[RMDB]
Background
An RNA of 207 nucleotides, treated with 2A3 and DMS and read out base by base. The reactions ran in a buffer of 150 mM KOAc, 10 mM MgCl2 and 150 mM bicine (pH 8.5), at 24 C. The data come from the RNA Mapping Database (RMDB), library VIROID. 2A3 adducts were read by reverse transcription with SuperScript II with manganese.

RNA sequence: GGGAACGACUCGAGUAGAGUCGAAAAAAGCACGUCGCAAUGACGUAAGGUGGGACUUUUCCCUACAGUUCGAGCGGUCGAACUAGAGGGGAGUGUAACCUUGGUACCGCCGUAGAAACUGGAUUACGACGUCUACCCGGGAUUCAAACUCGGCCCCCAAGUACAGCUUCUUCGGAAGCUGUACUUGAAAAGAAACAACAACAACAAC
Reactivity to 2A3 in 0.01 (KOAc 150mM, MgCl2 10mM, bicine 150mM(pH8.5), 24C), signal-to-noise 3, nucleotides 027 to 156: a010a000g090c060a010c000g000u010c020g020c160a070a270u280g030a020c020g000u010a020a060g030g010u070g010g030g030a030c030u060u020u110u200c010c000c000u020a070c040a000g000u010u000c000g030a080g070c230g170g170u050c020g000a000a020c020u050a050g000a020g070g000g050g020a020g020u070g050u050a060a070c000c000u010u050g050g020u070a080c010c020g030c010c010g000u030a010g220a050a140a010c050u080g030g020a020u130u030a080c030g000a000c030g210u000c010u010a020c000c000c000g010g010g010a100u190u200c100a080a070a070c060u010c010g050g000c000c000c000c000
Reactivity to DMS in 0.01 (KOAc 150mM, MgCl2 10mM, bicine 150mM(pH8.5), 24C), signal-to-noise 1, nucleotides 027 to 156: a160a070g020c060a060c000g020u000c020g010c050a190a110u030g020a080c080g050u000a110a050g030g030u020g020g020g010a090c030u000u000u000u000c000c000c020u000a020c050a050g040u000u000c000g030a160g020c300g000g010u000c000g010a050a000c010u000a030g000a070g000g020g020g020a050g020u060g020u020a080a100c040c050u020u000g020g010u000a020c020c010g060c020c030g020u000a090g000a140a130a120c160u000g000g020a220u010u020a220c010g000a090c050g020u010c050u000a090c050c030c010g030g000g000a240u000u000c120a090a110a150c080u000c000g040g000c020c060c010c090
The DMS profile rests on 2,209 reads. The 2A3 profile rests on 1,527 reads.